[RMDB]
RNA sequence: GGGAACGACUCGAGUAGAGUCGAAAAAUGAGGACUCCGGGGUCCCCUUCCGAAGGAACGGAGGGGGGUGACUAGGAAUCAGGAUCCAGUGGAUCCGUGGGAAUUAUCCCGUUCCACCCCCGCGGCAAUGCGGUCCGGUUCGCCGGACCGAAAAGAAACAACAACAACAAC
Reactivity to 2A3 in 0.01 (KOAc 150mM, MgCl2 10mM, bicine 150mM(pH8.5), 24C), signal-to-noise 4, nucleotides 027 to 129: a000u210g010a060g040g050a020c010u010c000c000g010g000g020g020u060c000c010c000c000u010u000c010c010g050a110a100g170g060a190a070c020g000g000a010g010g000g000g010g000g010u030g000a060c040u020a040g000g050a010a020u040c050a040g020g000a010u000c010c010a060g100u190g090g040a000u000c000c000g020u080g040g000g010a010a020u170u040a090u180c010c010c010g000u020u000c010c010a060c000c010c000c000c020g010c000g020g020c040a080a040u130g000
Reactivity to DMS in 0.01 (KOAc 150mM, MgCl2 10mM, bicine 150mM(pH8.5), 24C), signal-to-noise 3, nucleotides 027 to 129: a140u040g010a100g020g000a040c050u020c000c020g000g020g000g060u020c000c000c010c030u030u020c030c000g000a240a160g080g070a170a140c010g000g000a050g000g000g000g000g000g000u030g020a070c010u030a120g000g000a030a080u030c130a110g000g020a010u000c000c040a140g050u070g000g000a040u010c000c000g010u020g000g000g000a040a040u000u000a100u000c010c010c030g000u000u000c000c010a240c010c020c000c000c000g010c050g020g060c080a090a060u160g010

The data come from the RNA Mapping Database (RMDB), library 15KLIB. Chemical mapping of a 170-nucleotide RNA with 2A3 and DMS. The 2A3 profile rests on 8,219 reads. For DMS, 15,573 sequencing reads were counted. The RNA was probed in 150 mM KOAc, 10 mM MgCl2 and 150 mM bicine (pH 8.5) at 24 C.